An RNA of 170 nucleotides, treated with 2A3 and DMS and read out base by base. It was measured as part of the RMDB library 15KLIB. The RNA was probed in 150 mM KOAc, 10 mM MgCl2 and 150 mM bicine (pH 8.5) at 24 C.
[RMDB]
RNA sequence: GGGAACGACUCGAGUAGAGUCGAAAAACGUUGAUAUGGAUUUACUCCGAGGAGACGAACUAGCACGAACAGGGGAAACUCUACCCGUGGCGUCUCCGUUUGACGAGUAAGUCCUAAGUCAACAUGCGUACGCCCACGUUCGCGUGGGCGAAAAGAAACAACAACAACAAC
Reactivity to 2A3 in 0.01 (KOAc 150mM, MgCl2 10mM, bicine 150mM(pH8.5), 24C), signal-to-noise 3, nucleotides 027 to 129: a020c050g010u000u000g000a000u000a000u050g000g000a000u000u020u000a000c000u000c010c020g010a040g000g000a010g000a000c000g030a050a020c110u160a050g030c000a000c000g020a030a040c050a080g010g000g010g000a000a000a040c000u000c000u010a020c030c000c020g000u000g000g010c000g000u000c000u000c000c000g000u120u080u090g000a000c000g000a010g000u000a000a000g000u010c000c010u010a000a000g000u000c000a000a000c000a010u070g020c020g090u050a040
Reactivity to DMS in 0.01 (KOAc 150mM, MgCl2 10mM, bicine 150mM(pH8.5), 24C), signal-to-noise 3, nucleotides 027 to 129: a000c190g000u030u010g000a050u020a090u000g000g010a040u000u080u010a030c050u070c000c010g020a070g050g020a000g000a000c010g000a150a010c130u030a230g000c020a070c180g000a090a200c090a290g030g100g040g020a000a100a100c010u140c000u000a160c210c240c020g040u020g000g030c020g010u020c030u000c020c000g010u110u050u040g020a150c300g020a010g060u040a000a010g020u020c000c000u030a000a040g020u020c000a010a000c030a060u090g020c050g000u040a050